[RMDB]
RNA sequence: GGGAACGACUCGAGUAGAGUCGAAAAGGCAGCGAAUUCGUUCGCUGCCAAUACAGGACGUGGAGCCGGCUUGACGGCGCACGUCGAUGACGCCCGGGCCGGAGAAUCCAGAUUUCGAUCUGGAUAAGUUUAAGGGUCAUUUCGAUGACCCUUAAACAAAAGAAACAACAACAACAAC
Reactivity to DMS in 0.01 (KOAc 150mM, MgCl2 10mM, bicine 150mM(pH8.5), 24C), signal-to-noise 2, nucleotides 027 to 126: g010g000c010a000g020c010g000a000a040u000u010c160g040u000u000c010g010c000u000g000c000c000a020a010u000a080c130a140g030g010a040c070g000u000g000g000a200g040c010c000g000g010c190u020u000g000a150c070g010g000c000g000c000a010c020g000u010c090g000a060u000g000a120c100g000c020c010c010g010g000g010c000c030g000g000a090g000a170a070u000c000c000a000g000a010u000u000u010c170g010a030u000c000u000g000g010a010u000a020a080
Reactivity to 2A3 in 0.01 (KOAc 150mM, MgCl2 10mM, bicine 150mM(pH8.5), 24C), signal-to-noise 1, nucleotides 027 to 126: g020g000c000a000g000c020g000a030a030u090u130c140g040u090u010c010g000c000u000g000c000c000a000a000u000a000c010a020g160g040a010c020g080u040g070g080a040g050c050c000g010g050c040u170u210g140a080c040g000g020c030g000c000a000c010g090u060c020g000a100u020g010a040c030g000c000c000c000g000g040g020c030c010g040g090a030g080a060a020u000c000c000a000g000a010u080u080u140c200g060a000u010c000u000g000g000a010u030a100a010